[RMDB]
This 177-nucleotide RNA was probed chemically with 2A3 and DMS. Reactivities are given for positions 27 through 126. The DMS profile rests on 3,629 reads. The reactions ran in a buffer of 150 mM KOAc, 10 mM MgCl2 and 150 mM bicine (pH 8.5), at 24 C.
RNA sequence: GGGAACGACUCGAGUAGAGUCGAAAAGAAGGUAAAACAGCCUGUGGGUGAAACACACCCACAGGGCCCAUUGGGGGCUAGCACUCUGGUAUCACGGUACCUUUGUGCGCCUGUUUUACCCAGAAAACACCCUAUCCGAUUUCGAUCGGAUAGGGUGAAAAGAAACAACAACAACAAC
Reactivity to 2A3 in 0.01 (KOAc 150mM, MgCl2 10mM, bicine 150mM(pH8.5), 24C), signal-to-noise 3, nucleotides 027 to 126: g080a030a010g000g000u000a020a000a030a000c000a000g000c000c010u000g000u010g000g010g000u010g020a060a130a020c100a010c000a000c060c000c000a000c000a000g000g000g000c000c000c000a050u250u300g190g000g000g000g000c090u100a040g000c000a010c010u000c010u020g020g000u000a000u020c020a010c200g160g000u010a010c000c000u010u010u000g000u000g000c010g000c000c000u000g000u000u000u010u000a000c000c010c000a000g100a010a090a000a020
Reactivity to DMS in 0.01 (KOAc 150mM, MgCl2 10mM, bicine 150mM(pH8.5), 24C), signal-to-noise 2, nucleotides 027 to 126: g000a140a060g020g020u000a000a000a000a000c000a020g020c010c000u000g030u000g030g000g010u020g000a100a300a150c300a160c000a020c000c000c010a000c000a000g000g000g030c000c000c000a190u030u040g000g040g000g000g000c010u040a130g010c000a050c000u000c000u000g000g020u000a020u000c060a200c300g000g000u000a000c000c010u000u010u040g020u000g020c020g000c090c000u020g000u000u000u000u000a030c000c010c080a120g010a050a010a060a120